[RMDB]
RNA sequence: GGGAACGACUCGAGUAGAGUCGAAAAGAUAUGGAGACACUACCCACCGUCUGUCAGCUUUGAUCAGCCUUUAGUUCGGAAACGAACUAAAGGCUGGGAGCUGGUCAGACGAGGUGUCUCCUAAGUCCUCUAAGCUAAUGUUCGCAUUAGCUUAGAGAAAAGAAACAACAACAACAAC
Reactivity to 2A3 in 0.01 (KOAc 150mM, MgCl2 10mM, bicine 150mM(pH8.5), 24C), signal-to-noise 1, nucleotides 027 to 126: g090a080u300a130u300g010g000a030g020a020c000a000c020u210a200c000c050c020a000c000c020g010u030c000u010g030u020c010a000g030c090u110u080u200g220a230u300c010a020g000c010c000u000u030u010a010g000u000u000c020g080g030a130a120a140c030g010a000a020c000u000a010a010a000g190g000c020u010g010g010g010a000g000c010u000g010g030u220c020a000g020a000c000g000a000g000g000u000g000u000c000u000c000c000u000a000a000g020u040c020
Reactivity to DMS in 0.01 (KOAc 150mM, MgCl2 10mM, bicine 150mM(pH8.5), 24C), signal-to-noise 4, nucleotides 027 to 126: g010a130u020a190u010g010g010a020g010a010c010a000c010u000a110c030c020c040a300c100c010g000u000c000u000g010u010c000a000g000c010u000u010u010g000a170u010c010a010g010c000c000u000u000u000a000g020u000u000c010g000g000a080a150a220c000g010a030a010c000u000a000a000a010g010g010c000u000g000g010g010a020g000c000u010g010g000u010c010a000g000a010c010g000a020g010g010u000g000u000c010u000c000c010u000a020a140g000u020c120
About this RNA:
Conditions: 150 mM KOAc, 10 mM MgCl2 and 150 mM bicine (pH 8.5), 24 C. Chemical mapping of a 177-nucleotide RNA with 2A3 and DMS. The 2A3 profile rests on 2,718 reads. It was measured as part of the RMDB library TTRINS.